[RMDB]
RNA sequence: GGGAACGACUCGAGUAGAGUCGAAAAGAUAUGGAGCAAGAGCAACAGCAUACGGGCUCGGAAACGAGCUUAUGACAUGCUCGACCUCCUAAGUCAAAAGUCUUAUUACCUUCGGGUAAUAAGACAACACAUUCUAAUGGUUCGCCAUUAGAAUGUGAAAAGAAACAACAACAACAAC
Reactivity to DMS in 0.01 (KOAc 150mM, MgCl2 10mM, bicine 150mM(pH8.5), 24C), signal-to-noise 9, nucleotides 027 to 126: g000a030u010a300u000g000g010a020g010c020a030a300g000a010g010c000a040a130c300a140g000c020a020u010a060c300g010g010g010c000u000c000g010g000a040a050a140c000g000a010g000c000u000u000a010u000g000a070c080a140u000g000c010u000c000g000a300c300c010u000c000c000u000a030a080g010u010c030a100a060a100a160g000u000c000u000u000a010u000u000a010c000c000u000u010c230g030g010g010u000a000a000u000a000a000g000a000c000a050a150
Reactivity to 2A3 in 0.01 (KOAc 150mM, MgCl2 10mM, bicine 150mM(pH8.5), 24C), signal-to-noise 5, nucleotides 027 to 126: g030a010u050a020u110g010g000a000g000c030a080a020g030a000g000c020a020a300c070a210g070c010a040u070a100c160g090g040g000c010u000c000g000g010a020a020a010c010g000a000g000c000u020u010a020u020g060a140c040a100u110g000c000u010c000g050a050c000c010u000c010c000u020a060a020g030u030c020a050a020a080a100g000u000c000u000u000a010u000u000a000c010c000u010u080c300g100g000g000u000a000a000u010a000a000g000a000c000a000a000
Record summary: This 177-nucleotide RNA was probed chemically with DMS and 2A3. The RNA was probed in 150 mM KOAc, 10 mM MgCl2 and 150 mM bicine (pH 8.5) at 24 C. The DMS profile rests on 10,589 reads.